[RMDB]
RNA sequence: GGGAACGACUCGAGUAGAGUCGAAAAACUUUUAGCGUUUGCAAGACGCUGUUCUUGCAAUGAUCUGGAUUUAGCCCACGGAGGUCCGAAAUCCAGAUCAACAUUUCGGACCUCCGCGCUAAUAAAACCGUACUACAAAUUUCGAUUUGUAGUACGGAAAAGAAACAACAACAACAAC
Reactivity to 2A3 in 0.01 (KOAc 150mM, MgCl2 10mM, bicine 150mM(pH8.5), 24C), signal-to-noise 3, nucleotides 027 to 126: a000c030u110u070u060u090a060g030c030g040u040u060u090g000c000a020a000g000a000c040g100c300u140g070u130u000c010u000u010g010c010a010a020u060g040a080u030c060u060g060g000a050u040u080u090a040g030c030c000c000a010c000g000g000a010g000g030u000c000c000g000a010a010a010u030c060c020a030g010a080u070c000a000a010c000a000u000u000u010c010g000g020a010c010c000u000c020c000g020c000g000c000u030a050a030u020a060a150a020a030
Reactivity to DMS in 0.01 (KOAc 150mM, MgCl2 10mM, bicine 150mM(pH8.5), 24C), signal-to-noise 3, nucleotides 027 to 126: a060c070u010u000u000u000a050g000c060g010u000u010u010g010c010a010a020g010a010c020g030c300u000g010u010u010c000u000u000g000c010a020a020u000g000a080u010c090u000g010g000a130u010u000u010a050g010c050c010c170a120c030g000g000a020g010g000u000c000c010g000a020a010a010u010c100c160a120g000a090u010c150a070a090c140a050u000u000u000c010g000g000a030c000c000u000c000c010g010c040g000c030u000a000a030u000a060a050a080a120
Structure probing data (2A3 and DMS) for a 177-nucleotide construct. The DMS profile rests on 3,077 reads. The data come from the RNA Mapping Database (RMDB), library M2PK90. High 2A3 reactivity points to a flexible backbone, as in loops and unpaired stretches. Conditions: 150 mM KOAc, 10 mM MgCl2 and 150 mM bicine (pH 8.5), 24 C. For DMS the reverse transcriptase was MarathonRT.